RNA sequence: GGGAACGACUCGAGUAGAGUCGAAAACGACCACUGUCGGUACUGUUUUUGAUCGUUUUGCUCAGCGUGCUGCUGUCACUGUUCAUAAACGAUGAUAUAUCGCCGACAUCCAGCGCCUGGGCCGGAGGUAGCCUAACGGGUUCGCCCGUUAGGCUACAAAAGAAACAACAACAACAAC
Reactivity to 2A3 in 0.01 (KOAc 150mM, MgCl2 10mM, bicine 150mM(pH8.5), 24C), signal-to-noise 1, nucleotides 027 to 126: c020g050a010c000c040a090c180u160g050u070c050g000g050u060a110c020u080g060u020u020u010u160u150g090a090u040c060g010u000u040u050u080g000c010u000c010a000g030c050g100u090g000c030u000g020c000u040g020u070c010a010c110u050g010u190u070c080a060u200a090a160a030c060g040a000u010g100a010u050a020u030a010u300c040g040c010c060g000a010c000a000u000c000c020a010g020c000g010c020c020u020g000g000g000c000c000g040g000a070g030
Reactivity to DMS in 0.01 (KOAc 150mM, MgCl2 10mM, bicine 150mM(pH8.5), 24C), signal-to-noise 1, nucleotides 027 to 126: c010g000a040c010c040a040c190u000g010u000c070g020g010u000a100c170u000g030u000u010u010u000u010g040a060u000c010g010u000u000u000u000g040c050u010c010a000g010c230g020u020g020c040u000g000c170u000g000u000c040a120c110u000g010u020u020c170a070u050a050a070a060c050g000a050u000g000a190u010a130u000a020u010c050g010c100c030g000a000c000a020u010c140c000a060g020c050g050c020c000u000g000g020g020c040c140g020g030a040g000
Chemical mapping of a 177-nucleotide RNA with 2A3 and DMS. DMS (dimethyl sulfate) methylates the pairing face of unpaired adenines and cytosines. For 2A3 the reverse transcriptase was SuperScript II with manganese.